[RMDB]
RNA sequence: GGGAACGACUCGAGUAGAGUCGAAAAAACACAUUGGUGUUACUCGCAUAAUGUAAUAUCUACUGGUUGUCAAGACCAUGCUGCGAGUUCACAGUAUAUUUCCAUAGGAAUAGUAGAUACAGGAUUGCUCUAAGUGAUUAUUCGUAAUCACUUAGAGAAAAGAAACAACAACAACAAC
Reactivity to 2A3 in 0.01 (KOAc 150mM, MgCl2 10mM, bicine 150mM(pH8.5), 24C), signal-to-noise 9, nucleotides 027 to 126: a000a000c130a070c080a120u200u200g210g000u020g030u050u030a050c010u020c040g030c050a080u060a180a050u210g070u170a150a040u030a080u120c010u020a010c010u020g020g030u040u030g160u210c100a080a030g010a010c000c000a010u040g010c010u010g010c010g050a070g120u070u080c030a010c000a000g020u020a020u010a010u060u090u020c040c060a100u150a080g030g010a020a020u010a030g020u010a000g000a020u030a050c040a030g160g050a150u130u170g020
Reactivity to DMS in 0.01 (KOAc 150mM, MgCl2 10mM, bicine 150mM(pH8.5), 24C), signal-to-noise 9, nucleotides 027 to 126: a040a020c040a030c030a290u010u010g030g020u000g010u000u000a080c030u000c030g020c110a090u010a070a050u000g010u000a090a150u000a060u000c020u000a020c010u000g010g010u000u000g000u010c280a100a130g000a020c010c000a040u000g010c050u000g010c020g000a140g020u010u010c060a040c020a040g010u000a020u000a030u000u000u000c000c080a130u010a140g010g010a030a030u000a020g010u000a010g000a020u000a030c110a110g010g010a120u000u000g010
Annotation
An RNA of 177 nucleotides, treated with 2A3 and DMS and read out base by base. For DMS the reverse transcriptase was MarathonRT. The 2A3 profile rests on 22,642 reads. It was measured as part of the RMDB library OK2TST.